Background:
The data come from the RNA Mapping Database (RMDB), libraries RFM100 and RFMREP. Structure probing data (DMS and 2A3) for a 177-nucleotide construct. The reactions ran in a buffer of 150 mM KOAc, 10 mM MgCl2 and 150 mM bicine (pH 8.5), at 24 C. Values cover nucleotides 27 to 126. For 2A3 the reverse transcriptase was SuperScript II with manganese.

RNA sequence: GGGAACGACUCGAGUAGAGUCGAAAACUUCGAGAAAGUUGGCACAGGCACUGCAUUGUUACUGGCAGCAAACACAUAAAGCGCGACCUUCAACGAAGAAGGCUGCACUUCCCGAUAGAACGGGACCCUACUUUCUACAGUUCGCUGUAGAAAGUAGAAAAGAAACAACAACAACAAC
Reactivity to DMS in 0.01 (KOAc 150mM, MgCl2 10mM, bicine 150mM(pH8.5), 24C), signal-to-noise 7, nucleotides 027 to 126: c030u010u010c060g020a120g020a080a060a060g010u000u010g000g010c040a080c080a090g010g000c110a060c020u000g020c040a080u020u000g000u020u010a090c060u020g010g010c050a040g000c100a060a050a060c130a080c110a060u010a050a100a040g010c030g010c000g000a070c020c020u010u000c000a110a160c280g030a150a090g010a020a030g010g010c000u010g010c010a050c040u000u000c000c000c010g000a120u010a120g010a110a140c030g000g010g000a090c290c080
Reactivity to 2A3 in 0.01 (KOAc 150mM, MgCl2 10mM, bicine 150mM(pH8.5), 24C), signal-to-noise 9, nucleotides 027 to 126: c000u070u060c040g070a080g050a050a090a040g060u080u070g050g010c030a040c030a090g020g030c020a010c050u050g020c040a070u080u080g040u100u120a080c050u050g060g000c000a010g010c020a040a110a010c040a010c010a110u190a140a110a020g040c050g010c010g070a160c010c010u030u030c030a160a130c140g050a070a130g010a000a010g040g000c020u050g000c010a040c050u100u040c010c000c000g030a050u080a140g080a100a010c010g000g010g000a020c010c000